[RMDB]
RNA sequence: GGGAACGACUCGAGUAGAGUCGAAAAGUUCGGAUUGCGGGCUGAAACCCGCCCGCAUGAAGCUGGAUUCGGUAGUAAUCGCGUGUCAGAAGCGCGCGGUGAAUACGUCCCUGCUCCUUGCACACACAAUACAAUAGCUGUUCGCAGCUAUUGUAUUAAAAGAAACAACAACAACAAC
Reactivity to DMS in 0.01 (KOAc 150mM, MgCl2 10mM, bicine 150mM(pH8.5), 24C), signal-to-noise 9, nucleotides 027 to 126: g000u010u020c040g020g000a150u000u010g010c010g000g000g010c010u010g010a080a100a120c190c100c110g000c000c020c010g020c010a010u000g000a250a090g010c030u000g010g000a240u010u000c060g010g000u000a040g010u020a140a010u010c000g000c000g010u000g010u000c050a230g010a140a250g000c020g000c000g010c000g000g010u000g000a130a180u020a050c030g010u000c020c010c020u010g010c030u000c040c030u010u010g010c060a080c130a090c180a090c160
Reactivity to 2A3 in 0.01 (KOAc 150mM, MgCl2 10mM, bicine 150mM(pH8.5), 24C), signal-to-noise 9, nucleotides 027 to 126: g070u100u140c020g020g030a040u020u030g000c000g000g010g000c020u080g050a160a100a110c040c020c010g010c000c000c000g000c000a000u010g010a010a010g020c030u040g010g030a130u120u060c050g030g020u040a010g000u020a030a010u010c000g000c010g010u020g060u100c120a120g070a260a020g090c000g000c000g000c000g000g010u010g010a020a030u100a070c010g020u020c000c000c000u020g020c010u040c020c010u050u150g030c040a050c000a000c000a010c020
Conditions: 150 mM KOAc, 10 mM MgCl2 and 150 mM bicine (pH 8.5), 24 C.
The record gives the reactivity of an RNA of 177 nucleotides to DMS and 2A3.
It was measured as part of the RMDB libraries RFM100 and RFMREP.